Conditions: 150 mM KOAc, 10 mM MgCl2 and 150 mM bicine (pH 8.5), 24 C. This 207-nucleotide RNA was probed chemically with 2A3. Values cover nucleotides 27 to 156.
[RMDB]
RNA sequence: GGGAACGACUCGAGUAGAGUCGAAAAACAACAAGCACUGCGGACAUUCAUUGGAAGCUGGUUCGGGCAUCCUAAAAAACAAAAAACUUUUUUCAGCAGCUAAAAAAAUGCACUUUAAUGUGAUUGAGCCACAUGCUAUGUAAGUCUUCAUUAAUCCCGCUAAGUGUUACUUCGGUAACACUUAGCGAAAAGAAACAACAACAACAAC
Reactivity to 2A3 in 0.01 (KOAc 150mM, MgCl2 10mM, bicine 150mM(pH8.5), 24C), signal-to-noise 2, nucleotides 027 to 156: a000c050a010a000c030a040a000g060c000a010c120u080g040c030g020g020a020c010a050u040u040c030a040u070u210g110g010a060a000g000c050u070g040g020u100u080c030g000g000g000c000a050u090c000c030u130a070a040a010a040a000a110c140a070a160a080a080a120a160c040u140u130u050u010u060u130c050a000g000c000a000g010c040u110a110a080a000a020a020a000a040u140g010c000a020c020u040u120u110a160a100u170g020u010g060a020u010u080g000a030g000c010c000a030c000a030u090g000c010u050a030u150g020u000a020a110g010u040c050u070u040c060a060u130u130a030a040u050c070c020
For 2A3, 752 sequencing reads were counted.